[RMDB]
The record gives the reactivity of an RNA of 177 nucleotides to DMS and 2A3.
For DMS, 1,176 sequencing reads were counted.
Source: RMDB library RFMREP, as collected in RNAgym.

RNA sequence: GGGAACGACUCGAGUAGAGUCGAAAAUGGAGCUAAUCUCAUAAAACCGUUCUCAGUUCGGAUUGUAGGCUGCAACUCGCCUACAUGAAGCUGGAAUCGCUAGUAAUCGCGGAUCAGCAUGCCGCGGGUACUACUGCCGAUUCGUCGGCAGUAGUACAAAAGAAACAACAACAACAAC
Reactivity to DMS in 0.01 (KOAc 150mM, MgCl2 10mM, bicine 150mM(pH8.5), 24C), signal-to-noise 2, nucleotides 027 to 126: u010g000g010a050g020c120u000a080a070u000c040u000c060a090u000a080a110a110a160c110c040g000u000u000c010u010c000a010g000u010u000c090g010g000a140u000u000g000u000a010g010g020c000u000g040c140a160a110c270u020c110g000c000c000u010a000c010a000u000g010a250a100g010c040u000g010g000a040a010u000c090g010c110u030a080g010u010a050a120u000c000g000c000g000g000a020u000c060a130g010c140a110u010g010c000c000g000c000g010g020
Reactivity to 2A3 in 0.01 (KOAc 150mM, MgCl2 10mM, bicine 150mM(pH8.5), 24C), signal-to-noise 3, nucleotides 027 to 126: u090g080g000a030g040c090u080a080a060u090c020u000c080a020u150a010a130a050a090c040c000g020u020u020c140u020c020a030g030u220u220c030g020g020a010u020u000g010u010a010g000g040c010u060g060c080a060a160c050u090c120g000c000c000u000a000c000a000u020g000a010a020g000c010u020g000g040a030a010u050c020g040c110u080a000g120u100a210a050u100c000g020c020g000g020a030u080c070a060g050c050a040u210g010c020c010g040c000g000g020
Background:
Conditions: 150 mM KOAc, 10 mM MgCl2 and 150 mM bicine (pH 8.5), 24 C. Values cover nucleotides 27 to 126.